[RMDB]
RNA sequence: GGGAACGACUCGAGUAGAGUCGAAAAAGAAAUGUUGCAGAAUCAGUUUAUUGGUGAGGACACCCGGCUGAAUAUUAAUUCCAGUCCUGAUGAGCAUGAGCCUUUACUGAGACGAGAGCAACAAGCUGGCCAUGAUGAAGGUGUUCUGGAUCGUCUAGAUCCAUUACCGGUUCGCCGGUAAUGGAUCAAAAGAAACAACAACAACAAC
Reactivity to 2A3 in 0.01 (KOAc 150mM, MgCl2 10mM, bicine 150mM(pH8.5), 24C), signal-to-noise 2, nucleotides 027 to 156: a010g050a010a040a010u030g000u060u070g000c040a030g090a120a120u090c030a020g030u010u130u160a120u170u150g010g010u040g010a050g000g010a000c020a020c060c000c010g000g010c020u010g020a020a030u090a120u170u130a160a100u110u030c020c020a030g070u110c000c020u030g050a050u040g030a010g080c050a070u040g010a010g020c000c000u000u090u070a110c050u030g010a010g000a080c040g030a030g000a000g110c000a000a090c020a020a020g070c050u040g000g040c000c000a050u040g010a020u030g070a070a000g050g010u050g000u040u090c020u000g000g050a090u040c050g060u000c020u020a030
Reactivity to DMS in 0.01 (KOAc 150mM, MgCl2 10mM, bicine 150mM(pH8.5), 24C), signal-to-noise 1, nucleotides 027 to 156: a040g030a180a090a060u020g010u000u000g030c020a110g000a140a250u000c030a080g020u000u000u010a050u020u000g020g050u050g000a210g020g000a180c050a080c000c000c150g030g040c010u000g000a020a040u000a280u000u040a060a130u010u000c000c010a090g000u000c030c050u020g000a040u000g000a070g060c050a190u000g000a260g020c000c000u000u000u000a030c050u000g020a130g000a160c020g000a110g000a110g060c100a030a050c020a090a050g060c030u000g010g010c050c020a160u000g020a080u010g000a050a020g010g030u000g000u000u000c020u020g000g000a120u000c070g000u030c010u000a250